RNA sequence: GGGAACGACUCGAGUAGAGUCGAAAAUCGGACUCGAUACGGGCCUUGAUGCGGCGAAUCUCGCGCACCGAGUCAGCGGACACACCGUCGGGCGGAUACCGCGUUUUGUCGACCAUCCGUAGGAAUCCCACCCCUUUACGUUCGCGUAAAGGGGUGGAAAAGAAACAACAACAACAAC
Reactivity to DMS in 0.01 (KOAc 150mM, MgCl2 10mM, bicine 150mM(pH8.5), 24C), signal-to-noise 2, nucleotides 027 to 126: u000c090g020g000a120c070u000c030g000a130u000a090c110g030g000g000c140c030u020u020g000a030u000g000c050g010g010c030g020a050a070u000c140u000c070g040c030g020c090a060c030c040g000a060g020u000c100a090g000c050g020g000a180c160a120c190a070c030c000g040u000c080g030g000g000c020g000g000a080u020a080c050c010g000c010g000u000u010u030u000g000u000c020g000a040c050c090a110u000c010c030g010u000a070g010g000a140a070u000c040
Reactivity to 2A3 in 0.01 (KOAc 150mM, MgCl2 10mM, bicine 150mM(pH8.5), 24C), signal-to-noise 2, nucleotides 027 to 126: u070c010g050g050a020c030u010c060g010a010u060a110c020g070g000g040c020c010u050u100g060a060u070g020c040g040g000c050g140a060a050u020c060u040c080g040c000g000c010a090c060c040g010a020g170u100c040a030g040c010g050g040a050c040a010c030a020c170c010g080u090c050g040g000g000c000g000g010a050u030a080c040c000g030c010g030u030u020u020u110g050u030c030g020a060c000c040a070u050c040c020g040u080a080g100g070a050a070u030c020
The record gives the reactivity of an RNA of 177 nucleotides to DMS and 2A3. It was measured as part of the RMDB library OK2TST. 2A3 adducts were read by reverse transcription with SuperScript II with manganese. The reactions ran in a buffer of 150 mM KOAc, 10 mM MgCl2 and 150 mM bicine (pH 8.5), at 24 C.